Structure probing data (DMS and 2A3) for a 177-nucleotide construct. Reactivities are given for positions 27 through 126. For 2A3 the reverse transcriptase was SuperScript II with manganese. It was measured as part of the RMDB libraries RFM100 and RFMREP. In probing experiments dimethyl sulfate is read out at A N1 and C N3, which are open when not base-paired. Conditions: 150 mM KOAc, 10 mM MgCl2 and 150 mM bicine (pH 8.5), 24 C.
[RMDB]
RNA sequence: GGGAACGACUCGAGUAGAGUCGAAAAAGCACGUACGCGUGCAAAUCCAGAAAACAGUGAUGUGAUAAAUUCCAAGCACAUAUCUGAUGAUUCCAUGUGGAAAGCAGCUACUGAGUUUUCUGGACAACUAUAAAGUAUGCUUCGGCAUACUUUAUAGAAAAGAAACAACAACAACAAC
Reactivity to DMS in 0.01 (KOAc 150mM, MgCl2 10mM, bicine 150mM(pH8.5), 24C), signal-to-noise 9, nucleotides 027 to 126: a090g010c000a010c000g010u010a070c210g030c010g030u000g000c010a060a070a140u000c010c000a010g010a010a010a010a010c000a070g010u010g010a040u000g010u010g000a090u020a070a060a100u010u020c060c070a110a080g000c020a010c010a040u010a100u010c040u000g000a040u010g000a120u000u000c010c020a230u030g010u030g010g000a010a020a100g000c010a010g000c300u020a060c100u010g010a140g010u000u000u000u000c000u000g000g000a040c300a050a130
Reactivity to 2A3 in 0.01 (KOAc 150mM, MgCl2 10mM, bicine 150mM(pH8.5), 24C), signal-to-noise 9, nucleotides 027 to 126: a000g010c010a000c000g020u080a020c240g010c010g110u010g000c000a100a010a000u010c000c000a000g010a000a010a000a010c000a000g030u030g060a050u020g050u020g040a080u130a160a120a090u220u050c060c030a070a030g070c020a010c010a030u080a080u040c040u080g090a100u080g050a080u130u030c050c030a120u270g150u290g110g020a020a030a030g040c010a010g020c020u120a040c020u070g060a060g190u010u000u000u000c000u000g000g010a000c000a020a010